RNA sequence: GGGAACGACUCGAGUAGAGUCGAAAAGAUAUGGAUGUGAGGUGGGAGCGUACCACUCGGAAACGAGUGGACGCGAGGAUCACCCACAUCCUAAGUCAAAAGCAAACGGACUUCGGUCCGUUUGCAACGGUAUAUGACGGUUCGCCGUCAUAUACCGAAAAGAAACAACAACAACAAC
Reactivity to DMS in 0.01 (KOAc 150mM, MgCl2 10mM, bicine 150mM(pH8.5), 24C), signal-to-noise 3, nucleotides 027 to 126: g000a010u010a210u000g000g000a010u000g020u010g010a180g030g030u010g000g010g010a130g020c000g000u010a130c010c000a010c000u010c000g020g000a070a050a050c000g000a020g040u000g000g000a010c000g020c000g030a090g000g010a160u010c020a020c000c000c000a000c010a000u000c000c000u010a000a100g000u000c000a120a110a190a150g000c000a000a010a010c000g010g010a060c000u000u000c300g030g000u010c000c000g010u000u010u000g020c000a020a040
Reactivity to 2A3 in 0.01 (KOAc 150mM, MgCl2 10mM, bicine 150mM(pH8.5), 24C), signal-to-noise 3, nucleotides 027 to 126: g030a010u040a020u080g000g000a000u010g070u030g030a300g090g020u030g000g070g070a300g020c010g000u070a300c010c010a000c000u000c000g000g000a040a040a010c010g000a010g000u000g000g020a000c020g020c010g020a130g060g040a080u010c010a010c000c000c010a000c010a000u000c000c000u000a020a010g020u010c020a130a050a000a080g000c000a000a010a010c010g010g020a010c010u070u130c300g130g010u000c000c000g000u000u000u000g000c000a010a000
About this RNA:
The record gives the reactivity of an RNA of 177 nucleotides to DMS and 2A3. Source: RMDB library TTRDES, as collected in RNAgym. For 2A3, 9,378 sequencing reads were counted. Conditions: 150 mM KOAc, 10 mM MgCl2 and 150 mM bicine (pH 8.5), 24 C.